Chemical mapping of a 177-nucleotide RNA with DMS and 2A3. The RNA was probed in 150 mM KOAc, 10 mM MgCl2 and 150 mM bicine (pH 8.5) at 24 C. The data come from the RNA Mapping Database (RMDB), library OK2TRN. Reactivities are given for positions 27 through 126.
RNA sequence: GGGAACGACUCGAGUAGAGUCGAAAAAGUGGGUCUUCCUUGGGGCUCAGGGACUGAAUUUGAUGGGAGAUUCAGGGUUCACUCUCGAGGUGAUGUGGUUUGGGGCCACCCUCCCACCCAUCCAGCCCCAUUAACUCAAGUUCGCUUGAGUUAAUGGAAAAGAAACAACAACAACAAC
Reactivity to DMS in 0.01 (KOAc 150mM, MgCl2 10mM, bicine 150mM(pH8.5), 24C), signal-to-noise 8, nucleotides 027 to 126: a080g020u010g010g000g000u000c040u000u000c050c050u000u010g010g000g000g010c050u000c120a090g000g010g000a110c030u000g000a030a020u000u000u010g010a090u010g000g010g010a190g000a060u000u000c040a030g000g000g010u000u000c060a040c050u000c030u010c150g000a170g010g020u010g010a040u000g010u010g010g000u010u000u010g010g010g010g010c060c060a130c040c040c040u000c020c010c020a090c030c010c010a030u000c030c090a100g000c050c040
Reactivity to 2A3 in 0.01 (KOAc 150mM, MgCl2 10mM, bicine 150mM(pH8.5), 24C), signal-to-noise 6, nucleotides 027 to 126: a000g090u110g010g030g020u010c020u060u050c030c020u020u070g020g000g020g010c020u030c140a050g040g000g030a040c020u030g020a050a050u080u090u120g070a090u110g020g030g010a100g030a030u070u040c040a020g090g010g000u090u070c020a030c050u050c000u050c120g060a120g030g040u100g010a050u060g040u110g030g060u070u140u140g030g010g040g000c020c010a040c020c000c000u010c010c000c000a040c000c000c000a000u010c030c000a010g020c000c020